[RMDB]
RNA sequence: GGGAACGACUCGAGUAGAGUCGAAAAUGAGCCGUUCGCGGCUCACGGCAGGGGUCCAGUCCUUCUGAUGACCGUGAACUACGACUGAAGCCUCCACGGUCGCACGCAAGGAAGAGAGUGGACGGAGGCACCCGGAAAUUCUCGGUUCGCCGAGAAACUCACAUUUAGGGUUCGCCCUAAAUGUGAGAAAAGAAACAACAACAACAAC
Reactivity to 2A3 in 0.01 (KOAc 150mM, MgCl2 10mM, bicine 150mM(pH8.5), 24C), signal-to-noise 6, nucleotides 027 to 156: u080g010a000g000c020c010g040u070u090c260g020c060g110g000c010u000c000a010c030g080g000c090a090g000g030g070g020u020c030c010a050g160u000c020c010u020u030c030u080g250a300u120g040a070c040c030g000u020g020a090a120c090u210a080c250g080a040c050u080g060a070a000g010c010c010u000c000c010a020c020g010g000u020c010g000c010a020c020g030c060a110a130g040g020a020a010g140a000g000a000g060u010g000g010a020c020g010g000a000g010g000c010a040c000c000c010g000g000a050a120a080u100u010c010u000c000g020g020u100u070c200g000c040c000g010a020g030a020a010a010
Reactivity to DMS in 0.01 (KOAc 150mM, MgCl2 10mM, bicine 150mM(pH8.5), 24C), signal-to-noise 1, nucleotides 027 to 156: u010g010a010g030c050c000g020u010u040c170g060c000g070g000c000u010c000a030c070g010g000c120a150g000g040g000g030u010c020c040a080g000u010c010c000u000u010c010u030g000a160u020g010a150c140c070g000u010g010a090a130c030u010a190c030g010a100c040u000g030a080a170g000c010c000u000c000c000a300c030g010g020u010c020g050c040a060c170g060c090a300a200g000g000a070a060g010a130g020a070g030u010g000g030a030c050g000g020a090g050g010c010a180c010c030c010g040g010a090a050a130u000u000c010u010c000g000g020u000u000c220g000c010c000g030a030g000a000a030a090